Chemical mapping of a 177-nucleotide RNA with 2A3 and DMS. Conditions: 150 mM KOAc, 10 mM MgCl2 and 150 mM bicine (pH 8.5), 24 C. Reactivities are rounded to 0.1 and cut off at 0 and 3. 2A3 adducts were read by reverse transcription with SuperScript II with manganese.
[RMDB]
RNA sequence: GGGAACGACUCGAGUAGAGUCGAAAAAUGCGGAAGUCUGAGCGGGAGUCUACUCACCAUCUGAGGCGAAGCACUCGGCAAGUUGAUCGGGACUUGCUAACUUUGGCCAAGCAAGAAACCCUGUCAGACGUUCUGUAAAGUUCGCUUUACAGAACGUAAAAGAAACAACAACAACAAC
Reactivity to 2A3 in 0.01 (KOAc 150mM, MgCl2 10mM, bicine 150mM(pH8.5), 24C), signal-to-noise 3, nucleotides 027 to 126: a000u150g000c030g060g040a090a030g040u000c040u080g030a020g050c060g000g050g010a050g020u000c030u070a120c010u040c020a100c040c010a090u080c030u110g050a020g030g000c020g030a040a010g030c040a050c040u040c030g010g040c030a040a030g020u050u060g090a140u110c050g020g010g120a100c000u010u010g000c010u020a060a040c030u150u090u070g020g000c010c010a020a000g010c000a040a000g020a110a090a070c020c000c010u030g050u050c010a000g000
Reactivity to DMS in 0.01 (KOAc 150mM, MgCl2 10mM, bicine 150mM(pH8.5), 24C), signal-to-noise 6, nucleotides 027 to 126: a090u010g030c040g000g020a080a130g020u000c040u010g010a060g020c140g020g010g000a080g010u000c030u000a070c030u000c040a100c060c070a080u010c090u000g000a160g020g000c030g010a110a100g030c080a060c070u000c070g000g010c090a030a050g000u000u010g010a070u000c300g000g000g000a060c010u000u000g000c000u010a080a090c050u000u000u000g020g010c040c040a120a120g000c070a040a020g010a100a120a100c020c000c000u010g000u000c040a070g010